[RMDB]
RNA sequence: GGGAACGACUCGAGUAGAGUCGAAAAUCAAGAAUUAGCUUUUUUCUGUUCAGAUCUCGAAAACAUUCAGCGGCUCAGUGAUUGUCGAACAAUAGAUGAAGCGCAAAAAAUUCUGGCUCAAGCCUAAGUACGUCACUAAGUUCGCUUAGUGACGUACAAAAGAAACAACAACAACAAC
Reactivity to 2A3 in 0.01 (KOAc 150mM, MgCl2 10mM, bicine 150mM(pH8.5), 24C), signal-to-noise 5, nucleotides 027 to 126: u070c030a040a050g060a030a040u060u050a050g020c020u090u010u040u010u040u000c030u020g030u050u000c020a050g020a120u000c030u020c060g060a060a080a090a070c050a090u190u180c070a030g070c020g090g000c040u040c090a040g020u020g080a050u010u020g030u060c030g010a040a060c020a030a060u050a060g070a020u030g010a020a000g000c040g020c120a050a050a020a000a000a060u060u010c030u030g020g010c030u080c110a040a070g000c010c010u010a100a000
Reactivity to DMS in 0.01 (KOAc 150mM, MgCl2 10mM, bicine 150mM(pH8.5), 24C), signal-to-noise 2, nucleotides 027 to 126: u000c010a110a030g010a020a000u000u010a160g010c030u000u000u000u030u000u020c000u020g030u000u000c060a070g020a030u010c010u000c020g010a100a020a100a090c100a050u000u000c100a110g010c040g020g000c080u010c040a120g060u050g000a010u000u000g040u010c070g030a050a070c030a090a050u020a050g000a000u000g090a050a000g000c020g000c190a000a000a040a100a030a010u000u020c020u000g010g030c090u000c060a050a170g000c030c020u010a040a100